[RMDB]
RNA sequence: GGGAACGACUCGAGUAGAGUCGAAAAGGGGUCCACGUUGAAAGCGUGUUGUCAGCUCGUGGCUGAAGCCUCCACGGCCAUAGAGCUUGGAUUUACACGCUGGAGUGGACGGAGGCACCCAAAGAAGCUGUGUGUACUUCGGUACACACAGCUUCAAGAUGAUUCUUUCGUUCGCGAAAGAAUCAUCAAAAGAAACAACAACAACAAC
Reactivity to 2A3 in 0.01 (KOAc 150mM, MgCl2 10mM, bicine 150mM(pH8.5), 24C), signal-to-noise 1, nucleotides 027 to 156: g110g020g040g010u010c010c030a020c010g150u160u030g050a030a000a000g000c000g020u020g060u110u180g280u250c110a020g010c010u000c040g000u010g020g020c000u010g020a080a030g020c000c000u040c010c000a030c020g030g000c010c010a020u050a160g010a000g000c030u000u080g010g010a020u120u020u100a010c000a010c000g000c000u010g010g000a010g000u000g000g030a010c030g000g000a000g000g000c040a030c000c000c000a090a110a020g000a000a000g010c000u000g000u000g000u000g000u000a010c010u060u110c300g060g000u000a000c000a000c000a000c000a000g010c000u000u000c000a000a000